[RMDB]
Source: RMDB library TTRDEL, as collected in RNAgym. This 177-nucleotide RNA was probed chemically with 2A3 and DMS. 2A3 adducts were read by reverse transcription with SuperScript II with manganese.

RNA sequence: GGGAACGACUCGAGUAGAGUCGAAAAGAUAUGGAGCGUUGAACUACACCGUAGCUGCGAAGAACUCGGAAACGAGGGAGCAGUCAAGGUGCAACGCUCCUAAGUCAAACUCCGGUUCGCCGGAGAAGACACGUAAAUACUUCGGUAUUUACGUGUCAAAAGAAACAACAACAACAAC
Reactivity to 2A3 in 0.01 (KOAc 150mM, MgCl2 10mM, bicine 150mM(pH8.5), 24C), signal-to-noise 4, nucleotides 027 to 126: g040a010u060a030u160g010g000a000g020c000g000u000u010g040a150a080c080u190a030c300a000c010c010g110u170a000g000c010u010g000c020g150a300a050g010a080a050c000u000c010g030g000a090a060a040c010g000a010g040g000g000a030g000c010a000g030u090c050a100a040g000g000u000g000c000a000a000c000g000c000u000c000c000u000a000a000g000u000c000a010a030a060c010u000c010c000g000g060u060u100c300g040c070c010g020g000a010g010a000a000
Reactivity to DMS in 0.01 (KOAc 150mM, MgCl2 10mM, bicine 150mM(pH8.5), 24C), signal-to-noise 3, nucleotides 027 to 126: g010a050u010a300u010g010g000a040g000c000g010u000u000g000a120a060c090u020a300c020a030c010c020g000u010a300g010c000u000g000c000g020a120a090g000a100a140c030u000c000g010g000a130a110a090c000g000a040g000g000g000a090g000c000a020g010u000c010a300a270g010g000u000g050c010a020a010c000g010c000u000c000c000u000a020a040g000u000c020a090a130a130c020u000c000c000g010g020u000u010c250g000c010c000g000g000a020g000a090a070
The reactions ran in a buffer of 150 mM KOAc, 10 mM MgCl2 and 150 mM bicine (pH 8.5), at 24 C.